[RMDB]
Source: RMDB library OK1LIB, as collected in RNAgym. Structure probing data (2A3) for a 177-nucleotide construct. The reactions ran in a buffer of 150 mM KOAc, 10 mM MgCl2 and 150 mM bicine (pH 8.5), at 24 C. The 2A3 profile rests on 403 reads. For 2A3 the reverse transcriptase was SuperScript II with manganese.
RNA sequence: GGGAACGACUCGAGUAGAGUCGAAAAGCGGUGUCGAGGGUGGGGGGCACGCGAUAGAUCGCGGGAUCGAAACGGGCCGCCAGUGGUUGGUCAUCGGAUAUCGAUGUAAGGACGAGUCGACCCCCGGUCUGGGGUCUGGGUUCGCCCAGACCCCAGAAAAAGAAACAACAACAACAAC
Reactivity to 2A3 in 0.01 (KOAc 150mM, MgCl2 10mM, bicine 150mM(pH8.5), 24C), signal-to-noise 1, nucleotides 027 to 126: g010c040g000g000u000g070u070c070g000a160g030g120g060u180g000g030g050g080g050g030c000a000c000g000c010g170a220u010a070g150a080u020c000g030c000g060g230g000a090u000c000g000a000a030a030c060g000g040g000c000c000g050c070c070a060g020u180g280g020u150u110g010g010u110c080a000u060c010g120g000a250u150a020u140c000g000a000u060g080u130a000a060g230g000a000c000g000a000g070u000c000g010a090c020c020c000c020c020g040g060